[RMDB]
RNA sequence: GGGAACGACUCGAGUAGAGUCGAAAAGAAAGAAAGAAAGAAAUCUGACAGAAUGACGGAUGCGAUCGUUGUGGUCGGCGGGCCACCACGUCAUUCCUUCGCACUGUCUCCGGGCAGACCGCCAUAAAAAAGCGGAUCUACUUCGGUAGAUCCGCAAGAACAAAUUCCAGUUCGCUGGAAUUUGUUCAAAAGAAACAACAACAACAAC
Reactivity to 2A3 in 0.01 (KOAc 150mM, MgCl2 10mM, bicine 150mM(pH8.5), 24C), signal-to-noise 2, nucleotides 027 to 156: g070a000a050a010g060a060a100a010g050a030a140a030g100a030a130a060u080c020u080g030a060c070a040g210a150a050u090g000a000c030g010g020a030u030g010c010g020a040u080c010g000u000u010g000u000g000g030u020c050g020g000c010g000g030g020c000c000a000c000c000a000c020g060u030c040a110u090u110c000c010u030u000c000g000c000a000c020u040g000u010c010u020c060c080g030g110g020c010a020g010a100c000c010g020c000c000a050u170a030a100a030a020a020a000g000c000g000g000a000u000c000u000a000c000u000u050c090g020g000u000a000g010a000u000c000c000g000c000a000a000

This 207-nucleotide RNA was probed chemically with 2A3. For 2A3, 1,048 sequencing reads were counted. Source: RMDB library M2RFPK, as collected in RNAgym.